[RMDB]
RNA sequence: GGGAACGACUCGAGUAGAGUCGAAAAGUCGGGAAAAAGACCGUUGAUCACGGCCUGUGAAUGGCAAUCAAGCCACCGUCUUUUCUGUAAACAGGUUCUCUUGUGCAAAUCGCGUUUCAUGGACAGACUAUGACAGAAUUUUCGAAUUCUGUCAUAGAAAAGAAACAACAACAACAAC
Reactivity to 2A3 in 0.01 (KOAc 150mM, MgCl2 10mM, bicine 150mM(pH8.5), 24C), signal-to-noise 7, nucleotides 027 to 126: g000u000c000g010g030g040a030a120a060a000a030g020a050c000c000g010u030u140g080a100u100c090a000c020g000g010c010c010u100g020u050g140a130a100u030g000g000c010a030a120u180c100a130a060g010c000c000a050c010c010g000u010c000u000u010u010u000c010u020g090u110a100a100a080c040a030g010g040u000u000c010u000c000u050u080g090u030g040c060a050a050a110u100c110g010c030g090u040u080u100c060a090u090g060g030a040c020a040g040a020
Reactivity to DMS in 0.01 (KOAc 150mM, MgCl2 10mM, bicine 150mM(pH8.5), 24C), signal-to-noise 9, nucleotides 027 to 126: g010u000c000g000g000g010a070a080a150a090a020g010a020c000c010g000u010u020g020a150u030c210a090c010g000g000c010c000u000g000u020g020a110a150u010g010g010c000a130a100u040c290a140a140g010c010c000a090c000c010g000u000c000u000u000u000u000c000u010g000u020a060a090a130c140a070g000g000u000u000c010u000c010u010u010g020u010g000c120a050a070a120u010c090g000c160g010u000u000u010c060a070u020g000g000a100c150a090g000a200
Source information: This 177-nucleotide RNA was probed chemically with 2A3 and DMS. In probing experiments dimethyl sulfate is read out at A N1 and C N3, which are open when not base-paired. For 2A3 the reverse transcriptase was SuperScript II with manganese. DMS adducts were read by reverse transcription with MarathonRT. The RNA was probed in 150 mM KOAc, 10 mM MgCl2 and 150 mM bicine (pH 8.5) at 24 C.